[RMDB]
RNA sequence: GGGAACGACUCGAGUAGAGUCGAAAAGGAUCCUCUCACAGGAUUGUCUCUGUGUACCGAAACUCCAACAGUAUUGCUUCGGUACACCUACAGCAAUACUGUAGGUAUAGAGAGUAGGAGAGGAUCGUCCUCCCUCACUGUUCGCAGUGAGGGAGGAAAAAGAAACAACAACAACAAC
Reactivity to DMS in 0.01 (KOAc 150mM, MgCl2 10mM, bicine 150mM(pH8.5), 24C), signal-to-noise 2, nucleotides 027 to 126: g000g000a020u000c000c000u000c010u000c010a160c130a160g010g000a170u000u000g030u000c000u000c010u000g020u000g040u000a020c000c000g020a020a020a040c020u010c190c100a040a100c280a120g020u060a200u020u010g000c040u030u010c060g000g000u010a000c080a060c030c000u000a020c010a010g010c080a100a120u000a300c000u000g000u000a020g010g010u000a040u000a020g000a030g000a040g010u010a090g000g010a040g000a010g000g000a000u000c000g000
About this RNA
Structure probing data (DMS) for a 177-nucleotide construct. Reactivities are given for positions 27 through 126. For DMS the reverse transcriptase was MarathonRT.